Source: RMDB library RFM100, as collected in RNAgym.
Structure probing data (DMS and 2A3) for a 177-nucleotide construct.
For DMS, 1,295 sequencing reads were counted.

[RMDB]
RNA sequence: GGGAACGACUCGAGUAGAGUCGAAAACUCCAGUUAAUCCGCCCACCGCAACGGUGUCGGGCGAGGGUCGUCACGCCGGCAACGACCCCUUUCGGCGAAAGCUUCGCCAGGCCUCCCCUGGGGGCCACCUUGUAUGCCGGUUCGCCGGCAUACAAGGAAAAGAAACAACAACAACAAC
Reactivity to DMS in 0.01 (KOAc 150mM, MgCl2 10mM, bicine 150mM(pH8.5), 24C), signal-to-noise 1, nucleotides 027 to 126: c140u010c010c080a120g010u050u050a130a140u000c070c000g040c030c070c050a050c140c010g020c200a150a120c100g000g000u000g010u000c140g000g000g010c080g040a130g000g000g010u000c060g000u000c130a040c050g000c060c030g000g000c100a140a000c040g000a000c010c010c010c090u000u000u000c020g040g000c000g010a070a050a080g010c240u020u000c000g020c000c010a010g010g000c000c000u000c000c040c180c190u000g000g000g000g020g010c000c010a030
Reactivity to 2A3 in 0.01 (KOAc 150mM, MgCl2 10mM, bicine 150mM(pH8.5), 24C), signal-to-noise 4, nucleotides 027 to 126: c060u000c000c000a000g030u090u250a080a050u060c010c010g000c000c010c000a040c000c010g070c140a130a160c150g020g060u120g140u140c080g010g030g000c030g010a060g000g010g010u020c010g030u030c000a020c150g050c020c030g020g000c010a020a000c000g000a000c000c000c010c000u020u090u130c060g000g010c000g000a060a050a040g070c080u050u030c010g000c020c000a000g000g000c000c000u020c000c010c010c130u180g020g000g000g000g000c000c000a030